RNA sequence: GGGAACGACUCGAGUAGAGUCGAAAAGUCGAGUGACAUUGAUGGACACGGACACGCCGCGAGCCAGAUUCUCGUACAGCCACUUGUGCAGAGUGAUCCAGUCCACAUCACGAGAAAACGUGUCCGAGGCAAUGAAAUAAUCAUAUUUGGGAAGCUCGCCCCCUCUAAGAUUCGUCUUAGAGGGGGCAAAAGAAACAACAACAACAAC
Reactivity to 2A3 in 0.01 (KOAc 150mM, MgCl2 10mM, bicine 150mM(pH8.5), 24C), signal-to-noise 1, nucleotides 027 to 156: g020u010c010g000a020g010u120g000a030c020a060u020u050g050a060u110g040g030a010c020a000c040g010g010a030c000a010c020g040c010c010g040c010g000a000g020c010c030a080g020a130u130u040c040u020c000g020u040a030c070a020g030c060c010a080c050u070u050g010u090g060c020a000g070a000g010u030g020a100u050c020c000a010g060u100c020c000a020c020a050u070c000a000c010g040a000g000a050a100a030a030c000g000u000g000u010c000c010g000a000g000g040c030a010a040u100g020a080a050a110u190a050a020u140c050a060u010a170u140u060u050g000g080g000a050a000g000c000u000c040